[RMDB]
RNA sequence: GGGAACGACUCGAGUAGAGUCGAAAAUGGGGCUUACGCCAAUUUCACUUCCAAGUCGAAGAGAAUUAUUGUGCAACAAGUGCUAGUCAGGACGCAUUCGUCGAGUGUCGCCAUGGGACAUUCUUGGCUACUUCGUCGAACUCACAUUUUAGGCAAAACGUAGAUCGAGAUUCGUCUCGAUCUACGUAAAAGAAACAACAACAACAAC
Reactivity to DMS in 0.01 (KOAc 150mM, MgCl2 10mM, bicine 150mM(pH8.5), 24C), signal-to-noise 1, nucleotides 027 to 156: u000g010g010g020g010c040u000u000a070c000g030c010c040a010a010u010u000u000c030a070c000u000u000c000c030a030a130g030u000c070g000a040a010g000a070g000a060a060u000u010a090u010u000g000u000g030c010a200a150c160a070a070g020u000g000c030u000a110g010u000c100a080g010g000a080c050g030c100a140u000u000c040g090u000c030g020a100g000u000g000u000c100g010c000c010a090u010g000g010g010a230c110a140u000u020c020u000u000g000g010c000u000a020c020u000u010c020g010u000c040g030a020a030c020u000c050a080c120a070u000u000u000u000a110g000g000c030a020a070a050
Reactivity to 2A3 in 0.01 (KOAc 150mM, MgCl2 10mM, bicine 150mM(pH8.5), 24C), signal-to-noise 4, nucleotides 027 to 156: u040g000g010g010g000c010u050u030a040c060g000c000c000a010a010u010u000u000c040a040c010u020u040c020c030a270a080g110u270c090g030a030a000g070a010g000a050a020u190u100a050u070u110g110u150g090c010a050a050c030a080a030g030u020g070c020u080a040g160u180c080a050g040g060a030c070g010c030a020u000u020c000g000u000c010g020a090g150u070g010u030c030g000c000c010a040u030g070g000g050a140c100a130u260u060c000u030u000g000g020c000u010a000c000u010u020c010g000u000c000g000a010a020c020u040c010a160c010a090u020u070u050u140a080g080g020c060a040a070a030